[RMDB]
RNA sequence: GGGAACGACUCGAGUAGAGUCGAAAAGGCGGCUAGUUCGCUAGCCGCCAAAGUGCACACUCGCCAGCCAAGUGCACAAAAUAAAAGAAAAGGUAGGCGACAAAAGAGGGGCGUUCGCGCCCCUCAACAUUAACACGUUGUUCGCAACGUGUUAAUGAAAAGAAACAACAACAACAAC
Reactivity to 2A3 in 0.01 (KOAc 150mM, MgCl2 10mM, bicine 150mM(pH8.5), 24C), signal-to-noise 2, nucleotides 027 to 126: g000g020c000g010g010c020u000a010g030u020u040c130g000c060u000a000g000c000c000g000c000c000a000a000a000g010u010g020c000a000c000a020c030u060c010g010c010c010a010g010c010c010a100a030g010u000g000c030a000c010a010a100a020a010u050a000a030a000a020g070a020a080a000a020g040g010u070a090g000g030c010g020a020c080a020a080a030a010g010a000g030g010g000g000c010g020u040u040c110g010c010g010c030c010c010c000u000c000a000a010
Reactivity to DMS in 0.01 (KOAc 150mM, MgCl2 10mM, bicine 150mM(pH8.5), 24C), signal-to-noise 4, nucleotides 027 to 126: g010g000c000g020g000c000u000a000g020u000u000c220g030c000u000a010g000c000c000g050c010c010a000a000a040g010u000g010c010a020c020a110c200u010c030g020c010c030a270g030c010c000a120a110g000u000g000c000a020c010a090a060a090a080u010a040a080a080a130g000a080a060a070a110g020g000u000a110g000g010c020g020a130c300a060a050a130a090g010a020g000g010g020g000c000g030u000u000c200g010c010g010c010c000c000c000u000c010a000a050

This 177-nucleotide RNA was probed chemically with 2A3 and DMS. For 2A3, 4,262 sequencing reads were counted. It was measured as part of the RMDB library M2PK50.